This 177-nucleotide RNA was probed chemically with DMS. Values cover nucleotides 27 to 126.

RNA sequence: GGGAACGACUCGAGUAGAGUCGAAAAGGGAAACUUCUCGGCGUACUGUAAAACUCCGAACUCGUCACCGUCGUAGAAGGUUGGAGUGAGGGGCGCGGGGUAAGCUUGUGUCCCGAAAGAGAAACAAUAUCACAUCGGUUUUCGAACCGAUGUGAUAAAAAGAAACAACAACAACAAC
Reactivity to DMS in 0.01 (KOAc 150mM, MgCl2 10mM, bicine 150mM(pH8.5), 24C), signal-to-noise 3, nucleotides 027 to 126: g000g010g040a160a070a140c060u000u010c010u000c010g010g000c030g030u000a110c070u000g000u000a040a050a090a090c040u000c040c040g000a070a060c030u000c040g000u020c120a050c090c080g020u000c040g000u050a110g000a050a080g000g010u000u020g000g010a060g020u000g010a220g030g000g000g000c110g010c140g000g000g000g010u010a060a070g030c040u000u000g020u010g010u000c020c000c000g030a040a100a070g010a100g000a110a060a040c100a040a100
For DMS the reverse transcriptase was MarathonRT.